[RMDB]
Chemical mapping of a 177-nucleotide RNA with 2A3 and DMS. For 2A3 the reverse transcriptase was SuperScript II with manganese. Reactivities are given for positions 27 through 126. The RNA was probed in 150 mM KOAc, 10 mM MgCl2 and 150 mM bicine (pH 8.5) at 24 C.
RNA sequence: GGGAACGACUCGAGUAGAGUCGAAAAUUGAAUGCGGAUGUGAGUGCGGAGGAUGAUGCCUGGCUGCCUCUGUUCCUAUUGGGAUUGUACAGGGUAGGAAGAGCAAGUGAGACUGCUUAUCGGACCAAGUCUUGUUUGAGUUCGCUCAAACAAGACUAAAAGAAACAACAACAACAAC
Reactivity to 2A3 in 0.01 (KOAc 150mM, MgCl2 10mM, bicine 150mM(pH8.5), 24C), signal-to-noise 1, nucleotides 027 to 126: u070u100g080a060a050u140g000c000g040g100a070u070g080u030g070a070g040u110g000c050g040g020a050g020g000a020u100g020a010u090g050c000c010u040g060g030c010u050g020c000c000u160c010u050g030u080u050c000c000u030a190u080u160g070g000g010a020u000u130g080u070a020c000a040g000g070g030u030a020g060g010a080a040g010a010g020c040a000a070g030u020g040a070g040a040c020u040g020c000u080u030a050u190c000g010g000a010c010c040a050
Reactivity to DMS in 0.01 (KOAc 150mM, MgCl2 10mM, bicine 150mM(pH8.5), 24C), signal-to-noise 2, nucleotides 027 to 126: u000u000g000a100a080u010g010c060g000g000a050u010g020u000g010a090g040u000g010c050g000g000a080g000g010a100u020g000a060u020g020c020c030u000g000g010c030u000g010c030c020u000c010u000g000u010u020c020c030u000a110u000u000g000g010g020a110u010u010g000u000a060c100a070g000g010g010u000a040g020g010a090a220g010a050g000c050a040a060g010u000g010a130g000a090c040u000g010c040u000u000a070u000c080g010g030a140c060c060a090